Chemical mapping of a 177-nucleotide RNA with 2A3 and DMS. For 2A3 the reverse transcriptase was SuperScript II with manganese. Conditions: 150 mM KOAc, 10 mM MgCl2 and 150 mM bicine (pH 8.5), 24 C.
RNA sequence: GGGAACGACUCGAGUAGAGUCGAAAAGUGCCGAUUGAAAUUCAUGGGAGCCUCUCCAUAAUGGAUGAACGCCGCGGUAGUACGCGCAGUCGCGACGUAAACGCUCUGUUUUCCCGUUCAGGCCUCAAAAUAUUAAUAGUUUCGACUAUUAAUAUUUAAAAGAAACAACAACAACAAC
Reactivity to 2A3 in 0.01 (KOAc 150mM, MgCl2 10mM, bicine 150mM(pH8.5), 24C), signal-to-noise 1, nucleotides 027 to 126: g080u070g000c000c000g050a050u050u240g020a180a210a070u100u160c030a020u090g020g010g030a050g020c040c010u130c000u000c050c000a020u190a230a060u210g060g000a000u060g010a060a020c040g030c000c020g010c000g000g000u020a020g040u080a030c070g040c000g000c110a000g090u110c050g040c020g040a040c000g020u010a030a210a060c000g000c020u020c010u020g090u000u080u060u000c000c000c000g020u040u030c100a030g050g080c040c030u030c000a040
Reactivity to DMS in 0.01 (KOAc 150mM, MgCl2 10mM, bicine 150mM(pH8.5), 24C), signal-to-noise 4, nucleotides 027 to 126: g000u000g020c040c030g020a150u000u000g010a120a140a070u000u000c070a050u010g010g000g010a090g030c110c070u000c060u000c010c010a110u010a100a050u010g000g000a040u010g010a080a070c040g000c030c030g010c020g010g010u000a110g010u000a040c120g030c110g020c020a190g020u000c040g030c010g010a030c030g010u010a060a090a110c100g000c010u000c030u000g000u000u000u000u000c010c000c010g010u010u010c100a110g010g010c040c110u010c100a040

The DMS profile rests on 3,472 reads. As a SHAPE reagent, 2A3 marks flexible, mostly unpaired nucleotides at the ribose 2'-OH. Source: RMDB library OK2TRN, as collected in RNAgym.